[RMDB]
RNA sequence: GGGAACGACUCGAGUAGAGUCGAAAAGGAACUACCCCGGAACUCCCGCUCUCCACACUCCUUCCCCCCGCGGGCCCCCCAAUUCAGAGCCAAGAACCCACCCAUCGGGGUCCGACGUUCCUACCCUCGCCUCAAUACUUCGGUAUUGAGAAAAGAAACAACAACAACAAC
Reactivity to 2A3 in 0.01 (KOAc 150mM, MgCl2 10mM, bicine 150mM(pH8.5), 24C), signal-to-noise 4, nucleotides 027 to 129: g020g010a030a020c020u040a020c030c000c000c000g010g040a070a030c030u050c020c000c000g020c030u010c000u020c020c020a040c010a030c070u050c020c000u040u060c000c010c000c000c010c000g020c030g000g000g010c010c000c010c010c000c000a010a000u100u090c060a030g030a010g080c030c010a070a020g020a050a030c000c020c020a050c020c020c000a050u070c030g000g000g030g000u000c010c030g040a040c030g010u000u000c000c000u010a040c000c010c010u010c050g100c010
Reactivity to DMS in 0.01 (KOAc 150mM, MgCl2 10mM, bicine 150mM(pH8.5), 24C), signal-to-noise 9, nucleotides 027 to 129: g000g010a050a050c050u020a120c030c030c020c040g010g000a070a090c090u020c010c010c030g020c080u010c050u020c000c020a100c130a120c100u020c010c030u000u020c020c000c020c040c030c020g030c010g020g000g050c010c000c040c010c060c020a090a070u050u030c140a070g000a090g040c000c080a050a090g030a080a100c020c000c010a090c050c030c020a060u010c050g000g000g000g000u000c000c000g030a140c100g030u000u000c010c020u050a220c000c000c000u020c050g020c160